[RMDB]
RNA sequence: GGGAACGACUCGAGUAGAGUCGAAAAAUGGGUCUUAGCGAUGAGGCUUGUGAAGCGUAGACAGCGGGUACAAAAGCCGCGUAAUUGAGCCACGAAAUAGGUAAACAUUGUAAGAGGCUUUCACCGUAGGAAACAGGUAUUUCGAUACCUGUUUCCUAAAAGAAACAACAACAACAAC
Reactivity to DMS in 0.01 (KOAc 150mM, MgCl2 10mM, bicine 150mM(pH8.5), 24C), signal-to-noise 3, nucleotides 027 to 126: a080u010g020g000g030u000c000u000u000a190g030c080g030a040u030g010a050g020g020c000u020u000g020u000g000a170a110g000c050g000u000a070g020a050c060a160g010c000g000g000g010u020a110c210a040a080a170a100g000c010c000g000c020g020u000a040a060u000u000g000a150g000c030c010a070c070g000a040a090a090u000a080g020g000u010a050a100a090c080a070u010u020g000u000a030a100g030a070g000g000c000u000u000u030c060a040c030c010g000u030
Reactivity to 2A3 in 0.01 (KOAc 150mM, MgCl2 10mM, bicine 150mM(pH8.5), 24C), signal-to-noise 3, nucleotides 027 to 126: a020u100g010g000g000u030c030u040u090a040g070c050g030a020u050g040a020g000g030c000u030u010g030u020g070a100a030g030c020g010u060a030g030a140c040a050g030c020g000g010g040u180a190c080a080a140a040a010g080c010c000g000c000g020u030a000a040u060u080g020a030g010c000c000a060c030g080a100a050a100u150a130g010g070u150a070a090a030c030a010u040u010g010u050a110a050g020a010g100g000c000u040u010u040c140a170c100c020g020u100
Conditions: 150 mM KOAc, 10 mM MgCl2 and 150 mM bicine (pH 8.5), 24 C.
Chemical mapping of a 177-nucleotide RNA with DMS and 2A3.
2A3 adducts were read by reverse transcription with SuperScript II with manganese.